[RMDB]
RNA sequence: GGGAACGACUCGAGUAGAGUCGAAAAAUGUAGAGGUUGCGAUGAAUUUUGGAUUGUUCUCUCAAGUUAGCAGGCAGGUCACUUUUCUCUUUUACGAAGGACUUCGAGUGCACUGGGGUCAGCAUAGGUACUAUUGCUAGUUCGCUAGCAAUAGUACAAAAGAAACAACAACAACAAC
Reactivity to DMS in 0.01 (KOAc 150mM, MgCl2 10mM, bicine 150mM(pH8.5), 24C), signal-to-noise 4, nucleotides 027 to 126: a090u000g010u000a060g000a060g000g020u000u000g020c050g000a050u000g020a080a110u000u000u010u000g010g010a060u000u010g020u000u000c040u000c030u000c080a080a110g020u010u000a060g030c070a040g000g010c040a070g000g000u000c040a050c050u010u000u000u000c070u000c040u000u010u000u010a110c140g010a090a070g000g010a070c090u000u000c090g000a080g010u010g000c060a080c060u010g010g000g010g010u010c050a050g000c130a060u010a060g010
Reactivity to 2A3 in 0.01 (KOAc 150mM, MgCl2 10mM, bicine 150mM(pH8.5), 24C), signal-to-noise 3, nucleotides 027 to 126: a000u090g020u030a020g010a040g040g040u100u090g020c030g060a050u050g050a070a170u070u100u160u100g050g040a050u050u060g000u070u020c030u010c000u010c040a000a060g030u040u040a020g020c040a000g050g000c000a010g020g000u030c010a020c000u040u010u130u010c040u010c000u030u090u020u050a080c070g050a070a040g060g030a030c010u020u030c050g020a020g040u040g010c030a010c060u010g000g020g000g020u040c030a010g000c010a030u050a090g150
Overview: Structure probing data (DMS and 2A3) for a 177-nucleotide construct. For 2A3 the reverse transcriptase was SuperScript II with manganese. The 2A3 profile rests on 3,348 reads. Conditions: 150 mM KOAc, 10 mM MgCl2 and 150 mM bicine (pH 8.5), 24 C.